[RMDB]
RNA sequence: GGGAACGACUCGAGUAGAGUCGAAAAACAUUUUACGAUAUGAUUCAGAUGGUGUCUUACUGGUUCGUACCAAGGGACAUAAUGGUUUCUUGUUUCCAACCAAAGAACAAGUGGCGAGCCUGAAUAAAAAACUGACUGCCGUUCGCGGCAGUCAGAACAACUGUGUUAACUUCGGUUAACACAGUUGAAAAGAAACAACAACAACAAC
Reactivity to 2A3 in 0.01 (KOAc 150mM, MgCl2 10mM, bicine 150mM(pH8.5), 24C), signal-to-noise 3, nucleotides 027 to 156: a000c050a010u140u160u120u150a100c070g010a060u050a050u280g090a070u060u120c070a050g050a110u090g050g040u060g040u070c020u040u100a160c040u070g010g020u030u080c070g040u100a040c000c030a050a030g010g000g010a000c010a020u150a090a140u120g060g010u000u010u010c000u000u010g010u010u020u000c010c010a040a050c010c010a080a090a000g040a040a030c020a040a020g030u020g030g000c030g010a000g040c020c030u020g070a060a030u110a110a110a010a000a000a020c000u000g010a000c000u000g000c030c000g030u040u060c210g020c000g080g050c020a000g020u000c000a000g000a000a010
Reactivity to DMS in 0.01 (KOAc 150mM, MgCl2 10mM, bicine 150mM(pH8.5), 24C), signal-to-noise 1, nucleotides 027 to 156: a070c070a070u000u010u000u000a080c160g020a160u000a020u000g010a100u000u000c030a140g010a160u010g020g030u000g000u010c020u000u010a140c030u000g040g000u000u000c160g060u010a090c090c000a050a110g070g010g020a070c040a040u010a050a140u020g010g020u000u000u000c010u000u000g000u000u000u000c040c030a040a050c120c020a070a050a130g000a060a080c030a010a040g030u000g020g000c020g000a090g020c040c000u000g000a110a100u020a020a080a090a100a100a130c010u010g000a040c010u000g000c000c010g060u000u000c300g030c020g040g030c000a000g000u010c000a000g050a050a130

Background: This 207-nucleotide RNA was probed chemically with 2A3 and DMS. For DMS the reverse transcriptase was MarathonRT. Reactivities are given for positions 27 through 156. The DMS profile rests on 1,961 reads. Source: RMDB library M2RFPK, as collected in RNAgym. 2A3 adducts were read by reverse transcription with SuperScript II with manganese. The 2A3 profile rests on 1,886 reads. The RNA was probed in 150 mM KOAc, 10 mM MgCl2 and 150 mM bicine (pH 8.5) at 24 C.